Chemical mapping of a 207-nucleotide RNA with 2A3. It was measured as part of the RMDB library RNAMAK. The RNA was probed in 150 mM KOAc, 10 mM MgCl2 and 150 mM bicine (pH 8.5) at 24 C. For 2A3, 678 sequencing reads were counted. Reactivities are rounded to 0.1 and cut off at 0 and 3.

RNA sequence: GGGAACGACUCGAGUAGAGUCGAAAACAGUUACAUUCGUGUAACUGAAAAAUCCUAAGUCAACCCGUUUGACGGGGAGCUCUAUAUCGGAAACGAUAUAUAAGAGCGAAGAACCCGAGGGUUGAUAUGGAAAAAAAUACACUCUUCGGAGUGUAAACGGCACUAUGUUAUUCGUAACAUAGUGCCGAAAAGAAACAACAACAACAAC
Reactivity to 2A3 in 0.01 (KOAc 150mM, MgCl2 10mM, bicine 150mM(pH8.5), 24C), signal-to-noise 1, nucleotides 027 to 156: c010a000g000u000u000a010c020a020u030u080c250g030u030g010u020a000a020c010u010g010a140a030a030a000a030u020c040c000u020a100a040g050u010c000a000a010c000c000c010g060u080u250u300g100a050c030g020g000g020g000a020g000c000u000c000u010a000u000a000u000c000g010g000a060a040a050c000g010a000u000a000u010a000u020a130a100g000a010g020c050g000a240a080g010a050a020c020c020c000g020a050g000g010g060u020u000g000a000u000a020u040g000g030a000a000a050a000a290a000a000u150a010c000a000c060u120c060u020u130c270g040g000a000g020u010g000u050a070a050a040